[RMDB]
RNA sequence: GGGAACGACUCGAGUAGAGUCGAAAAGGAUCCUCUCACAGGAUUGUCUCUGUGUUCCGAAAUUUCAACAGUAUUGCUUCGGGACACCUACAGCAAUACUGUAGGUAUAGAGAGUAGGAGAGGAUCGCUAGUGCAGAGUAUUCGUACUUUGCACUAGAAAAGAAACAACAACAACAAC
Reactivity to DMS in 0.01 (KOAc 150mM, MgCl2 10mM, bicine 150mM(pH8.5), 24C), signal-to-noise 9, nucleotides 027 to 126: g000g000a010u000c000c000u000c000u000c010a120c090a150g010g010a130u010u010g010u000c020u010c000u000g010u000g010u000u000c000c000g010a030a050a150u010u000u010c090a090a110c130a110g010u010a300u000u000g010c300u000u000c120g010g000g000a030c130a050c010c010u000a020c060a010g000c040a080a080u000a300c000u000g000u000a000g010g000u000a060u000a020g000a010g000a050g010u000a080g000g000a030g000a010g010g000a000u000c000g010
Reactivity to 2A3 in 0.01 (KOAc 150mM, MgCl2 10mM, bicine 150mM(pH8.5), 24C), signal-to-noise 9, nucleotides 027 to 126: g030g000a000u000c000c010u000c000u000c010a180c030a050g090g080a140u080u180g100u010c010u000c000u010g050u000g000u030u000c000c000g010a010a020a020u060u080u040c050a100a080c020a070g100u120a080u050u120g070c040u010u010c000g000g000g000a010c000a020c000c000u010a000c000a000g020c030a040a100u040a180c000u000g000u000a000g000g000u030a030u180a060g030a000g010a010g060u100a060g010g070a010g000a000g000g000a000u000c000g000
This 177-nucleotide RNA was probed chemically with DMS and 2A3. The RNA was probed in 150 mM KOAc, 10 mM MgCl2 and 150 mM bicine (pH 8.5) at 24 C. Reactivities are rounded to 0.1 and cut off at 0 and 3. It was measured as part of the RMDB library OK2TRN. DMS adducts were read by reverse transcription with MarathonRT. The DMS profile rests on 82,393 reads. Reactivities are given for positions 27 through 126.